[RMDB]
RNA sequence: GGGAACGACUCGAGUAGAGUCGAAAACAUGCGUCAGACGGGGCACGGCCACGGAGGGCUGCGUGGCCGUGGUGAGGUCCACGAGCCAGGCCUCGACGGCCUCCCGGCGGUGGCCCGCCUUGCCCAGCCUCUUGCUGCCUUUCGAGGCAGCAAGAGGAAAAGAAACAACAACAACAAC
Reactivity to 2A3 in 0.01 (KOAc 150mM, MgCl2 10mM, bicine 150mM(pH8.5), 24C), signal-to-noise 2, nucleotides 027 to 126: c030a040u260g030c000g070u170c000a010g020a020c000g060g000g050g070c060a030c030g100g000c020c000a060c070g000g010a080g010g100g140c020u020g000c020g020u030g000g000c040c000g100u040g000g000u000g020a060g000g160u160c100c100a150c110g000a040g000c010c010a020g000g030c030c000u090c070g130a280c020g010g000c000c000u010c010c000c030g010g050c000g090g000u010g010g070c000c000c000g060c000c000u040u110g020c000c010c000a030g040